Annotation
Chemical mapping of a 177-nucleotide RNA with 2A3 and DMS. Source: RMDB libraries RFM100 and RFMREP, as collected in RNAgym. For DMS the reverse transcriptase was MarathonRT. The reactions ran in a buffer of 150 mM KOAc, 10 mM MgCl2 and 150 mM bicine (pH 8.5), at 24 C. 2A3 adducts were read by reverse transcription with SuperScript II with manganese.
[RMDB]
RNA sequence: GGGAACGACUCGAGUAGAGUCGAAAAGGUGAGAGAAACGCGUAUCGAUGGAUUGGGUUCAGUUCUGGUCUCACACGGUUUGUUCUAACAAUUUGUACUGACUGUGUUUUGAUCGAUACGGGUCGCUAAAUAAUAACCUCUUCGGAGGUUAUUAUUUAAAAGAAACAACAACAACAAC
Reactivity to 2A3 in 0.01 (KOAc 150mM, MgCl2 10mM, bicine 150mM(pH8.5), 24C), signal-to-noise 9, nucleotides 027 to 126: g110g010u130g040a100g010a010g070a090a120a010c110g020c010g110u010a000u010c010g000a020u040g060g030a020u010u060g040g030g010u110u150c060a090g060u170u080c100u070g010g010u020c010u020c010a010c000a000c000g010g000u010u010u010g030u040u040c040u080a110a140c100a180a200u120u120u220g010u050a020c000u020g000a000c000u000g010u010g050u040u040u120u240g070a010u010c000g000a000u000a010c000g020g060g000u040c030g000c070u010
Reactivity to DMS in 0.01 (KOAc 150mM, MgCl2 10mM, bicine 150mM(pH8.5), 24C), signal-to-noise 9, nucleotides 027 to 126: g000g020u000g010a070g010a110g010a100a110a040c040g010c010g010u000a010u000c010g010a050u000g010g010a040u010u000g000g010g010u010u020c210a090g010u020u010c050u000g010g000u000c010u000c170a050c010a010c000g010g000u000u000u010g000u000u000c040u020a100a130c240a080a140u020u020u020g000u010a030c010u000g000a010c010u000g010u000g000u000u010u010u020g000a030u000c010g000a020u000a020c010g000g000g020u000c100g010c100u000